[RMDB]
RNA sequence: GGGAACGACUCGAGUAGAGUCGAAAAGAAAUUCUUGGGAGGCUAUGGCUCUGAACUUUAAGUUAAUAGGUAUUGGCGGUACACCUUGUAUAAAGGUUGCUGCUAUGCAGUCUAAACUUACAGAUCUCGAGUGGGCGCUUCGGCGCCCACAAAAGAAACAACAACAACAAC
Reactivity to 2A3 in 0.01 (KOAc 150mM, MgCl2 10mM, bicine 150mM(pH8.5), 24C), signal-to-noise 1, nucleotides 027 to 129: g050a000a010a000u090u020c010u010u030g030g060g000a000g060g030c050u070a040u190g140g000c030u000c010u160g000a080a020c010u000u000u040a020a010g000u000u080a120a070u010a190g000g000u070a010u030u110g000g000c000g000g000u050a030c020a020c020c000u000u000g120u080a160u300a090a000a000g000g080u000u010g000c000u000g020c000u020a000u070g020c000a010g010u090c000u100a120a000a000c030u010u000a010c000a060g020a100u000c030u000c050g000a030